Chemical mapping of a 177-nucleotide RNA with 2A3 and DMS. Conditions: 150 mM KOAc, 10 mM MgCl2 and 150 mM bicine (pH 8.5), 24 C. For 2A3 the reverse transcriptase was SuperScript II with manganese. For DMS, 8,836 sequencing reads were counted. The data come from the RNA Mapping Database (RMDB), library TTRDEL. Reactivities are given for positions 27 through 126.
[RMDB]
RNA sequence: GGGAACGACUCGAGUAGAGUCGAAAAGAUAUGGACGCACUACCCACCGGCUCUUUGAUCAAAGUCGGAAACGACUUUGGGAGAGCAGCGAGGUGCGUCCUAAGUCAAACCCGUCUUCGGACGGGAACUGGUAAUUAUUGUUCGCAAUAAUUACCAGAAAAGAAACAACAACAACAAC
Reactivity to 2A3 in 0.01 (KOAc 150mM, MgCl2 10mM, bicine 150mM(pH8.5), 24C), signal-to-noise 4, nucleotides 027 to 126: g090a060u230a140u260g000g000a000c010g030c010a010c020u120a130c020c030c040a040c060c040g050g010c000u020c020u240u300u110g110a160u180c020a000a010a010g010u000c010g020g000a030a030a010c010g000a000c000u010u020u000g020g020g010a020g000a000g000c160a030g230c050g050a050g000g030u000g000c000g000u000c000c000u000a010a000g040u020c070a080a050a120c000c000c000g000u000c010u020u060c270g130g000a000c000g000g000g000a000a030
Reactivity to DMS in 0.01 (KOAc 150mM, MgCl2 10mM, bicine 150mM(pH8.5), 24C), signal-to-noise 6, nucleotides 027 to 126: g010a080u010a200u000g010g000a010c010g010c000a010c010u000a140c080c030c040a300c180c040g000g000c000u000c000u010u000u020g000a140u010c010a010a010a010g010u000c000g000g000a050a060a120c010g010a000c000u000u000u000g010g000g000a020g000a020g010c020a040g010c050g000a140g010g010u000g000c000g010u000c000c000u010a010a060g000u010c150a070a100a140c000c000c000g000u000c000u000u010c190g010g000a010c000g000g000g000a010a010